[RMDB]
RNA sequence: GGGAACGACUCGAGUAGAGUCGAAAAGGUAAGCUUGUCGUCGAUCAUCACCCCCAAGUGUUUGACGGAGCGCUUCGAAGUGAUUGUGCAGUCGCCUACACUGAUCACAGCUUGCUGCACCGACUUACGGCAUAAUUAGCUUCGGCUAAUUAUGCCGAAAAGAAACAACAACAACAAC
Reactivity to DMS in 0.01 (KOAc 150mM, MgCl2 10mM, bicine 150mM(pH8.5), 24C), signal-to-noise 2, nucleotides 027 to 126: g010g000u010a020a110g010c030u000u000g030u030c160g000u000c120g030a000u010c010a050u010c130a300c080c020c000c050c000a120a060g000u000g000u000u000u000g030a040c010g010g010a130g030c040g020c010u000u000c070g000a180a080g020u030g030a060u020u000g000u000g020c000a070g050u000c080g030c050c000u000a030c020a040c020u000g000a050u000c050a030c060a090g000c000u000u010g000c010u000g000c090a140c020c020g000a100c130u000u000a100